An RNA of 177 nucleotides, treated with 2A3 and DMS and read out base by base. Values cover nucleotides 27 to 126. The RNA was probed in 150 mM KOAc, 10 mM MgCl2 and 150 mM bicine (pH 8.5) at 24 C.

[RMDB]
RNA sequence: GGGAACGACUCGAGUAGAGUCGAAAAGAACCGCGAUUCGUCGCGGUUCGAGCGCCGUAGCGCGCAACGGCGUUACGGCAGCAUUAGCGCGCAGCUGCCGACGAUCGGGUGGUUUCGACCACCCGAACUGGGUACUAGUUUUCGAACUAGUACCCAGAAAAGAAACAACAACAACAAC
Reactivity to 2A3 in 0.01 (KOAc 150mM, MgCl2 10mM, bicine 150mM(pH8.5), 24C), signal-to-noise 3, nucleotides 027 to 126: g000a000a000c010c000g020c010g010a020u030u080c160g020u010c000g100c000g000g000u020u000c000g000a000g000c010g010c000c000g030u020a030g030c030g000c010g010c090a060a030c040g050g020c010g050u060u100a040c010g100g000c010a000g000c000a050u080u140a040g030c010g010c000g010c070a040g000c000u030g010c010c000g050a100c050g040a090u040c010g000g000g010u010g000g040u040u060u070c120g060a010c010c000a000c010c000c010g000a000a000
Reactivity to DMS in 0.01 (KOAc 150mM, MgCl2 10mM, bicine 150mM(pH8.5), 24C), signal-to-noise 4, nucleotides 027 to 126: g010a010a010c000c000g010c010g010a020u000u010c170g020u000c000g020c000g010g010u000u000c010g010a090g000c050g010c000c000g010u000a030g000c040g010c020g010c050a070a040c160g000g010c000g010u000u010a080c030g000g000c010a010g040c010a060u010u000a100g010c050g020c080g020c060a190g010c010u000g010c010c000g010a110c200g010a090u000c000g010g000g020u000g010g000u000u000u010c190g000a020c010c000a000c000c000c000g000a000a020